[RMDB]
RNA sequence: GGGAACGACUCGAGUAGAGUCGAAAAAGCGCACGGUACGCCGUGCGCAAGAAUCUGUUCGUAGUAUAGCGAAACAGGGUAAUAUAAAGUAAUGUACACUAAGAAGCGAGCCUUACGAGGCUCGCAAAAAAGUCUUUAUCGUUCGCGAUAAAGACAACAUAAGAAACAGGUUCGCCUGUUUCUUAUGAAAAGAAACAACAACAACAAC
Reactivity to 2A3 in 0.01 (KOAc 150mM, MgCl2 10mM, bicine 150mM(pH8.5), 24C), signal-to-noise 1, nucleotides 027 to 156: a000g000c000g080c000a000c000g000g000u060a040c160g020c030c000g020u010g020c010g010c000a000a000g000a010a030u010c010u020g000u000u000c030g000u010a050g030u020a110u090a140g020c000g030a150a000a000c010a000g020g000g020u100a050a030u070a150u110a270a110a030g130u070a030a190u120g040u130a020c050a040c090u140a170a100g070a120a000g100c010g010a000g000c010c000u080u010a070c160g030a010g000g000c000u020c000g000c000a030a000a000a000a000a000g000u000c000u000u000u000a000u000c010g010u020u080c160g010c010g030a010u000a000a000a000g010a010c000a000a000
Reactivity to DMS in 0.01 (KOAc 150mM, MgCl2 10mM, bicine 150mM(pH8.5), 24C), signal-to-noise 1, nucleotides 027 to 156: a110g030c000g000c000a000c010g060g070u000a100c300g050c040c020g050u000g020c010g100c000a000a020g010a060a100u000c010u000g030u020u000c020g000u000a100g010u000a140u010a110g010c020g000a110a020a040c020a050g010g000g030u010a090a110u000a110u020a080a060a130g000u010a070a140u010g000u020a090c040a130c190u000a040a120g000a140a190g000c040g000a020g050c010c020u000u030a110c150g010a120g010g000c000u000c000g010c000a000a020a020a040a030a040g010u000c000u000u000u000a010u000c010g020u000u020c300g000c010g000a010u000a010a010a050g000a000c000a060a060
An RNA of 207 nucleotides, treated with 2A3 and DMS and read out base by base.
Conditions: 150 mM KOAc, 10 mM MgCl2 and 150 mM bicine (pH 8.5), 24 C.
Values cover nucleotides 27 to 156.
It was measured as part of the RMDB library M2RFPK.
For 2A3, 799 sequencing reads were counted.